[RMDB]
RNA sequence: GGGAACGACUCGAGUAGAGUCGAAAAGCAGAGCUUGGAGAACCUGAAGUAGAACAGCUUGAUGUUGAAGUCCUUGUCGAGGAGAAGGUUCUAACACUUGAGGUUCUGGUGCAUGAUGUCCAGGUCGUAAGGGUACGACGUUCGCGUCGUACCCUUAAAAAGAAACAACAACAACAAC
Reactivity to 2A3 in 0.01 (KOAc 150mM, MgCl2 10mM, bicine 150mM(pH8.5), 24C), signal-to-noise 2, nucleotides 027 to 126: g140c160a030g020a000g070c000u090u070g030g000a010g000a000a000c000c000u010g010a070a000g120u090a100g000a040a000c040a030g070c000u020u060g110a120u000g180u100u030g190a150a020g150u130c030c000u130u120g200u100c140g050a010g060g000a040g120a050a030g160g000u110u030c000u060a000a080c030a030c030u000u030g020a000g020g000u020u040c000u000g110g000u180g000c100a090u110g000a000u130g040u000c000c000a000g010g040u010c000g060
Reactivity to DMS in 0.01 (KOAc 150mM, MgCl2 10mM, bicine 150mM(pH8.5), 24C), signal-to-noise 1, nucleotides 027 to 126: g020c040a060g020a130g030c030u000u000g000g000a060g000a010a090c020c030u020g000a080a070g000u000a010g000a060a150c020a050g020c060u000u000g010a100u010g000u010u010g000a100a030g000u010c020c000u000u020g000u020c120g020a060g000g000a190g000a070a030g000g000u000u000c020u000a030a230c070a190c010u010u000g000a000g020g000u000u000c010u000g000g000u000g000c080a080u060g000a130u000g010u000c000c050a030g000g010u010c050g010
An RNA of 177 nucleotides, treated with 2A3 and DMS and read out base by base. High DMS reactivity at an A or C suggests that its Watson-Crick edge is free. The data come from the RNA Mapping Database (RMDB), library OK1LIB. For 2A3, 628 sequencing reads were counted. 2A3 adducts were read by reverse transcription with SuperScript II with manganese. The reactions ran in a buffer of 150 mM KOAc, 10 mM MgCl2 and 150 mM bicine (pH 8.5), at 24 C.